RNA sequence: GGGAACGACUCGAGUAGAGUCGAAAAAUAUAUAAGCUGGAAAGUACAUGGUAGUUAGUCUACUCGCUAUCCUAGUUACUUUGGAGUAAUCUAAAGUGUGUGUAAACGGGCGAAAGUCUGUAAAAUAGACUAUUCCCUCAUUCGUGAGGGAAUAGUCAAAAGAAACAACAACAACAAC
Reactivity to DMS in 0.01 (KOAc 150mM, MgCl2 10mM, bicine 150mM(pH8.5), 24C), signal-to-noise 2, nucleotides 027 to 126: a050u030a090u040a080u030a020a150g000c050u020g030g030a050a030a030g010u000a060c060a060u010g010g010u020a050g020u010u020a060g000u040c000u000a030c010u000c160g000c060u010a040u030c050c080u010a100g030u020u050a040c020u000u000u000g000g000a000g000u110a110a080u000c010u000a000a000a020g010u000g000u010g010u040g020u030a010a070a050c010g000g000g020c040g020a120a070a150g000u000c020u010g010u010a050a070a050a080u010a190
Reactivity to 2A3 in 0.01 (KOAc 150mM, MgCl2 10mM, bicine 150mM(pH8.5), 24C), signal-to-noise 2, nucleotides 027 to 126: a000u130a000u020a010u020a020a000g000c050u070g000g100a070a090a000g070u020a040c040a090u070g070g000u010a010g010u120u010a120g000u070c010u030a090c000u020c020g000c000u020a050u080c000c010u050a100g070u080u100a070c020u000u080u070g030g040a020g020u050a150a030u000c030u050a060a020a010g000u070g030u020g000u020g020u110a050a040a040c020g000g000g000c020g050a100a000a000g000u000c040u030g030u040a020a010a050a110u150a010